[RMDB]
RNA sequence: GGGAACGACUCGAGUAGAGUCGAAAACAUCCACUGCUACGGCAGUGGAUGAACGAGGUAGGUACGCCUACCUCGAAAGUUGGAUGUAGGCAUAUACAUUAAACGUCCAUGGUACGCCAUGGACGAACUAUUACGGGUCAUUCGUGACCCGUAAUAGAAAAGAAACAACAACAACAAC
Reactivity to DMS in 0.01 (KOAc 150mM, MgCl2 10mM, bicine 150mM(pH8.5), 24C), signal-to-noise 3, nucleotides 027 to 126: c010a000u000c000c000a020c020u000g010c000u000a120c180g040g020c000a030g020u000g010g010a010u000g000a040a140c040g000a000g000g010u010a030g010g010u010a110c260g000c000c000u000a010c000c000u000c000g020a000a050a080g020u000u000g020g020a010u000g000u010a010g000g060c120a070u030a130u010a010c040a030u010u000a080a090a250c000g000u000c010c010a020u000g000g010u010a080c300g050c000c000a000u000g000g000a010c000g000a010a050
Reactivity to 2A3 in 0.01 (KOAc 150mM, MgCl2 10mM, bicine 150mM(pH8.5), 24C), signal-to-noise 2, nucleotides 027 to 126: c000a000u000c000c000a010c000u010g000c000u030a070c300g130g000c010a000g000u000g020g000a000u000g010a010a010c010g000a000g000g020u000a000g070g000u010a020c170g100c050c000u000a010c020c010u000c010g000a000a020a020g210u300u300g130g020a070u040g000u030a030g100g070c140a120u150a020u000a240c050a050u040u150a130a150a060c010g000u000c000c000a010u000g000g010u040a070c250g000c070c000a020u000g020g020a010c000g000a000a000
An RNA of 177 nucleotides, treated with DMS and 2A3 and read out base by base. 2A3 adducts were read by reverse transcription with SuperScript II with manganese. DMS adducts were read by reverse transcription with MarathonRT. The RNA was probed in 150 mM KOAc, 10 mM MgCl2 and 150 mM bicine (pH 8.5) at 24 C. The DMS profile rests on 3,390 reads.